[RMDB]
RNA sequence: GGGAACGACUCGAGUAGAGUCGAAAAUUAUUGAGCGUAGAAGUCUCUGUCACGAUACGAGUAAGUGACUCUCGUGUACUACUGGCGAAUGAGACAGAGACAUUAUAUGCUCGUGCCAGUCAAUAAACAAAACGUUCAGUUUCGACUGAACGUUUUGAAAAGAAACAACAACAACAAC
Reactivity to 2A3 in 0.01 (KOAc 150mM, MgCl2 10mM, bicine 150mM(pH8.5), 24C), signal-to-noise 2, nucleotides 027 to 126: u100u090a030u030u200g000a020g020c030g000u030a010g020a100a000g000u000c000u000c000u010g020u020c010a000c050g090a040u070a110c010g000a010g010u060a150a060g040u110g250a050c010u010c020u010c030g080u080g030u050a060c010u020a040c000u060g140g070c090g070a090a060u180g000a050g010a090c000a000g010a000g000a000c020a000u030u060a010u000a010u010g000c010u000c000g000u030g040c000c020a050g000u100c060a080a140u120a260a090a030
Reactivity to DMS in 0.01 (KOAc 150mM, MgCl2 10mM, bicine 150mM(pH8.5), 24C), signal-to-noise 2, nucleotides 027 to 126: u000u000a080u000u010g020a030g010c010g050u000a030g000a130a050g000u000c010u000c010u000g020u000c010a120c050g020a150u000a050c010g020a050g040u000a030a070g010u010g000a060c070u010c150u000c170g020u030g010u010a040c030u000a060c030u000g000g050c020g010a120a040u000g000a110g000a010c000a000g000a020g010a000c000a000u010u000a080u000a020u000g000c000u000c000g030u010g010c010c030a170g000u020c190a050a060u030a040a060a180